[RMDB]
Background:
Conditions: 150 mM KOAc, 10 mM MgCl2 and 150 mM bicine (pH 8.5), 24 C. Structure probing data (2A3) for a 207-nucleotide construct. The data come from the RNA Mapping Database (RMDB), library RNAMAK.

RNA sequence: GGGAACGACUCGAGUAGAGUCGAAAACGCUGGGUCGUUUGAUAGCAUACCAUUGUCAGAAAUCUUCUCUGAAGCGCGCACGGAGAAGAUUUCUUGGAUUUAUGGUAUUCCCUAUUGACGACCUGUGCUGAAGCGCGCACGGCAACCGAAAGGUGCGGUUAUGAGGGGACUUCGGUCCCCUCAUAACAAAAGAAACAACAACAACAAC
Reactivity to 2A3 in 0.01 (KOAc 150mM, MgCl2 10mM, bicine 150mM(pH8.5), 24C), signal-to-noise 1, nucleotides 027 to 156: c060g000c000u050g020g000g010u000c000g040u000u050u300g040a000u020a030g040c040a020u000a010c000c000a030u020u270g240u240c030a000g030a000a000a000u000c000u030u000c010u000c000u020g110a210a100g000c020g000c000g000c010a010c010g000g000a000g010a000a000g000a000u000u010u010c000u000u080g020g010a020u000u260u200a050u000g000g000u000a010u060u130c110c000c000u000a000u000u000g000a000c000g000a000c000c010u010g060u000g010c000u070g040a100a060g020c000g010c050g000c010a010c000g000g000c030a080a050c000c000g060a100a000a070g010g000u000g000c000g040